[RMDB]
RNA sequence: GGGAACGACUCGAGUAGAGUCGAAAACGCUGGGCGUCCACGGUCAGGCGAAGAACACCUGAAGCGCGCACGGGUGGGAGCCUGUCGUGGAGCGCCUGUGCUGAAGCGCGCACGGCAACCGAAAGGUGCGAAAGACCCGUAAGUUCGCUUACGGGUCCAUCGCUUUUAGCUUCGGCUAAAAGCGAUGAAAAGAAACAACAACAACAAC
Reactivity to 2A3 in 0.01 (KOAc 150mM, MgCl2 10mM, bicine 150mM(pH8.5), 24C), signal-to-noise 2, nucleotides 027 to 156: c020g020c030u080g000g000g000c000g080u020c000c000a000c040g060g160u300c090a000g020g020c000g160a220a000g000a010a000c000a000c000c010u040g040a220a110g060c010g000c010g010c010a030c020g000g000g010u000g020g000g000a020g020c010c020u030g030u000c000g000u020g000g000a010g080c020g000c000c010u000g010u030g000c010u050g020a120a050g000c000g010c000g000c020a010c000g010g000c020a040a020c010c000g030a100a050a050g030g000u020g000c010g070a140a060a050g020a000c000c010c000g000u000a020a000g010u040u190c270g010c190u000u000a000c000g020g010g010u000c000
Background
The record gives the reactivity of an RNA of 207 nucleotides to 2A3. The data come from the RNA Mapping Database (RMDB), library RNAMAK. For 2A3, 1,784 sequencing reads were counted. 2A3 adducts were read by reverse transcription with SuperScript II with manganese.